The record gives the reactivity of an RNA of 177 nucleotides to DMS and 2A3. Conditions: 150 mM KOAc, 10 mM MgCl2 and 150 mM bicine (pH 8.5), 24 C.
RNA sequence: GGGAACGACUCGAGUAGAGUCGAAAAGGGCAGUUUUAUUUGACGACGGAAAGGCUACCAUAGUAUCCGCCGCCGUAGUUUUUUUAUUAUGGCGGAGGUAGCAGGAUACGUUCGUCGUUGCUGCCCAGGGCGGUCUGAUCUUCGGGUCGGACUGCCCAAAAGAAACAACAACAACAAC
Reactivity to DMS in 0.01 (KOAc 150mM, MgCl2 10mM, bicine 150mM(pH8.5), 24C), signal-to-noise 7, nucleotides 027 to 126: g000g000g010c000a010g000u000u030u050u020a050u020u040u030g010a010c000g010a020c000g010g010a100a170a180g000g000c020u000a020c010c020a150u030a120g010u010a080u030c170c140g010c000c010g000c000c010g040u000a010g010u000u000u020u060u030u040u020a010u000u000a010u000g000g010c000g000g000a040g000g010u000a030g020c010a070g010g020a130u010a080c000g000u020u010c000g020u000c000g010u010u000g010c000u000g010c000c000c000a020
Reactivity to 2A3 in 0.01 (KOAc 150mM, MgCl2 10mM, bicine 150mM(pH8.5), 24C), signal-to-noise 9, nucleotides 027 to 126: g010g000g000c020a010g010u050u070u110u130a230u090u220u240g020a000c000g000a000c000g010g040a080a030a010g070g000c010u010a010c000c010a090u100a180g130u110a140u080c060c060g010c000c000g000c000c000g020u000a000g000u000u010u020u000u010u080u120a040u010u000a010u020g000g000c000g000g000a010g010g000u000a000g000c010a010g090g070a060u080a110c020g030u050u110c000g000u000c000g000u000u030g000c000u000g000c000c000c000a000